[RMDB]
RNA sequence: GGGAACGACUCGAGUAGAGUCGAAAAAGAGCCGGGUACGUCCGGCUCAACGGGGGAUACGUGUGGUGCCGUCCGCUCCCCCUAUGGCAUAACAAAUGCACCACACACUAGGCUACGGCCUAGUGAAAAAAUCCCUACAUGUUCGCAUGUAGGGAAACGAAGUAAGGUAGUUCGCUACCUUACUUCGAAAAGAAACAACAACAACAAC
Reactivity to 2A3 in 0.01 (KOAc 150mM, MgCl2 10mM, bicine 150mM(pH8.5), 24C), signal-to-noise 1, nucleotides 027 to 156: a000g010a010g010c040c040g000g000g040u220a160c040g150u040c000c000g000g010c000u000c000a000a000c000g010g010g000g000g010a040u060a050c000g050u050g000u000g030g010u000g000c020c020g040u030c060c100g020c020u070c000c010c000c000c010u030a150u160g070g040c080a140u050a210a030c060a090a050a030u100g000c000a000c000c000a000c000a000c000a000c000u000a000g000g000c000u040a000c180g060g000c000c000u010a000g000u000g000a060a000a000a000a000a030u020c000c000c000u000a010c010a010u000g020u020u060c090g020c160a000u000g000u000a000g020g010g000a000a000a000